Notes: This 177-nucleotide RNA was probed chemically with 2A3 and DMS. The reactions ran in a buffer of 150 mM KOAc, 10 mM MgCl2 and 150 mM bicine (pH 8.5), at 24 C. For DMS, 1,136 sequencing reads were counted. Values cover nucleotides 27 to 126.

RNA sequence: GGGAACGACUCGAGUAGAGUCGAAAAGAUAUGGACGCACUGCAUAGAGCGAAGAACACGCUCGGAAACGAGCGUGGGAGCUCGUGUUGCGUCCUAAGUCAAAACAGUGGACGUUCGCGUCCACUGAGGCAAUAGAGUGGUUCGCCACUCUAUUGCCAAAAGAAACAACAACAACAAC
Reactivity to 2A3 in 0.01 (KOAc 150mM, MgCl2 10mM, bicine 150mM(pH8.5), 24C), signal-to-noise 2, nucleotides 027 to 126: g000a010u000a010u090g020g000a010c010g040c010a010c100u230g050c090a230u300a300g010a000g000c040g300a300a000g000a010a000c040a000c000g030c010u010c010g000g000a010a010a000c000g020a000g000c000g030u000g010g000g000a000g010c000u070c190g070u080g030u170u070g010c000g000u020c000c040u000a000a000g000u000c020a000a020a120a180c020a000g000u020g000g010a010c060g060u050u100c300g040c040g060u030c000c020a000c010u000g000a000
Reactivity to DMS in 0.01 (KOAc 150mM, MgCl2 10mM, bicine 150mM(pH8.5), 24C), signal-to-noise 2, nucleotides 027 to 126: g000a000u000a230u030g020g030a010c010g030c000a040c280u000g030c300a170u030a150g020a030g000c020g000a130a150g020a180a190c060a000c010g030c000u020c000g000g000a000a010a050c000g010a000g020c010g000u000g000g000g040a080g020c000u000c020g010u000g000u000u020g020c010g010u000c010c020u000a000a040g000u030c040a040a100a060a300c010a010g000u000g000g000a020c020g050u000u010c290g020c010g040u020c020c000a030c000u000g010a000